[RMDB]
RNA sequence: GGGAACGACUCGAGUAGAGUCGAAAACCCUUAGCAUUCGUGCUAAGGGAAAUAACGGUCCGCUCAUGCAGCUAGUCGAAAAUGCUGCUCGACCUUUUGGUAAAAUCUGGCCGUUCGCGGCCAGAAAUUCUGUAUUGUCAUUCGUGACAAUACAGAAAAAAGAAACAACAACAACAAC
Reactivity to 2A3 in 0.01 (KOAc 150mM, MgCl2 10mM, bicine 150mM(pH8.5), 24C), signal-to-noise 3, nucleotides 027 to 126: c000c010c000u000u010a010g000c000a040u010u080c160g060u040g000c010u010a000a000g000g010g020a060a140a000u130a060a020c060g020g010u040c030c040g030c140u110c060a080u140g010c000a010g020c010u070a040g180u270c100g100a070a030a030a090u130g010c000u000g000c010u020c010g040a020c000c010u000u120u110u130g080g020u090a030a050a040a170u030c010u000g000g000c030c000g010u050u000c200g010c020g060g000c010c000a000g010a000a000a010
Reactivity to DMS in 0.01 (KOAc 150mM, MgCl2 10mM, bicine 150mM(pH8.5), 24C), signal-to-noise 4, nucleotides 027 to 126: c000c000c000u000u010a010g010c010a040u000u020c210g020u000g000c000u000a000a010g000g010g000a010a030a020u010a080a090c200g000g000u000c010c060g030c150u000c110a080u000g000c000a000g000c000u010a170g010u000c190g010a080a070a080a100u000g010c010u000g010c020u000c140g000a020c030c000u000u000u010u000g010g010u020a070a070a090a110u000c000u000g000g010c000c000g020u000u000c190g020c020g000g000c010c000a000g000a010a050a060
Chemical mapping of a 177-nucleotide RNA with 2A3 and DMS. The RNA was probed in 150 mM KOAc, 10 mM MgCl2 and 150 mM bicine (pH 8.5) at 24 C. Source: RMDB library M2PK50, as collected in RNAgym. For 2A3, 4,115 sequencing reads were counted.